RNA sequence: GGGAACGACUCGAGUAGAGUCGAAAAUCAAGAUUGAGCGAGAUCCACUCAGAGACUACAGACAGGCUAUCACAGAUGUAGGAACAAAUACAAUCUAUAGGCCAAAUCUAGACAGCUUGCUAAAAGAGAAUUAUUAAACCUUCGGGUUUAAUAAUUCAAAAGAAACAACAACAACAAC
Reactivity to DMS in 0.01 (KOAc 150mM, MgCl2 10mM, bicine 150mM(pH8.5), 24C), signal-to-noise 1, nucleotides 027 to 126: u020c050a120a140g000a040u000u000g020a100g010c040g010a130g000a130u000c040c030a070c100u000c020a100g020a230g000a080c000u040a050c130a030g000a090c120a080g000g000c040u000a040u000c080a110c170a090g000a040u030g010u020a060g000g010a040a110c110a050a040a000u000a020c010a030a030u000c060u000a040u010a090g040g030c090c010a040a100a070u000c020u020a040g010a070c070a080g000c060u000u000g000c120u010a040a040a120a180g000a210
Reactivity to 2A3 in 0.01 (KOAc 150mM, MgCl2 10mM, bicine 150mM(pH8.5), 24C), signal-to-noise 1, nucleotides 027 to 126: u080c000a040a000g080a110u050u240g030a010g040c020g000a010g000a080u000c000c020a060c010u090c000a020g020a020g000a120c050u070a030c100a050g100a040c000a000g000g050c020u010a020u110c020a050c010a090g080a030u010g050u080a080g010g030a140a000c030a040a210a040u130a080c020a080a060u100c010u060a080u050a120g030g000c000c000a000a060a000u000c010u010a060g050a120c020a040g020c010u000u050g000c000u100a130a000a000a000g110a010